[RMDB]
RNA sequence: GGGAACGACUCGAGUAGAGUCGAAAACCGUAGGAUAGUUGUCAGGAAACGUCCGACCAUCGAUCUAAGCUUCGAAAGAGGCUUAGGGAGGUCGGCGUUUCCUUGGAUUUACUAUCCUAAACGGAAAUCAUACACCACCUUCGGGUGGUGUAUGAAACAUCUGAAUCACCUUCGGGUGAUUCAGAUGAAAAGAAACAACAACAACAAC
Reactivity to 2A3 in 0.01 (KOAc 150mM, MgCl2 10mM, bicine 150mM(pH8.5), 24C), signal-to-noise 1, nucleotides 027 to 156: c000c030g010u010a000g010g000a000u000a000g010u000u030g010u000c010a000g000g050a000a000a000c010g140u190c130c010g010a000c000c000a300u300c020g020a010u020c000u000a000a000g000c010u010u000c000g030a050a100a100g030a000g010g030c000u000u000a010g000g000g000a010g040g000u000c000g010g020c000g010u000u000u000c000c000u000u120g000g000a000u040u000u170a010c000u000a000u000c000c000u000a030a000a000c040g010g060a100a020a130u080c060a000u040a000c000a020c030c020a010c030c000u030u070c220g060g000g000u000g000g000u010g010u000a000u000g010a000a000a000
Source: RMDB library RNAMAK, as collected in RNAgym. Structure probing data (2A3) for a 207-nucleotide construct. The RNA was probed in 150 mM KOAc, 10 mM MgCl2 and 150 mM bicine (pH 8.5) at 24 C.